The record gives the reactivity of an RNA of 177 nucleotides to DMS and 2A3. The RNA was probed in 150 mM KOAc, 10 mM MgCl2 and 150 mM bicine (pH 8.5) at 24 C. Reactivities are given for positions 27 through 126. For DMS the reverse transcriptase was MarathonRT. The 2A3 profile rests on 8,774 reads.

[RMDB]
RNA sequence: GGGAACGACUCGAGUAGAGUCGAAAAAUUGUGUUAUAGCUUGAGACUUGGAUACGAUGCUUUGGAUUGAGGAACGCGUAGUAAGCUUUGAGCGGAUUCGAAAGGAUCUCCUUACUAUGGAUGUUGGCACUUCUUUAAUGUUCGCAUUAAAGAAGUGAAAAGAAACAACAACAACAAC
Reactivity to DMS in 0.01 (KOAc 150mM, MgCl2 10mM, bicine 150mM(pH8.5), 24C), signal-to-noise 8, nucleotides 027 to 126: a080u010u000g010u000g010u000u000a090u000a080g000c030u000u010g000a110g000a080c050u000u010g000g000a070u000a050c080g010a050u010g010c060u000u010u000g010g010a140u000u000g000a100g000g000a060a050c070g010c030g010u000a010g010u000a010a020g000c210u000u010u010g010a120g020c190g010g000a020u000u000c010g010a090a080a200g010g000a010u000c010u000c060c000u000u000a020c030u000a020u000g010g010a080u000g010u000u000g010g010
Reactivity to 2A3 in 0.01 (KOAc 150mM, MgCl2 10mM, bicine 150mM(pH8.5), 24C), signal-to-noise 5, nucleotides 027 to 126: a000u080u060g040u010g030u060u080a090u050a080g020c020u040u060g050a030g030a120c020u040u050g060g010a020u060a100c040g030a040u070g000c000u050u060u060g070g040a070u030u110g050a050g040g040a070a020c030g000c010g060u010a010g000u000a010a000g020c040u140u170u160g050a060g020c130g020g000a010u020u000c010g040a070a010a010g010g000a010u000c010u000c010c010u000u010a020c010u010a020u050g060g030a060u070g040u060u030g020g020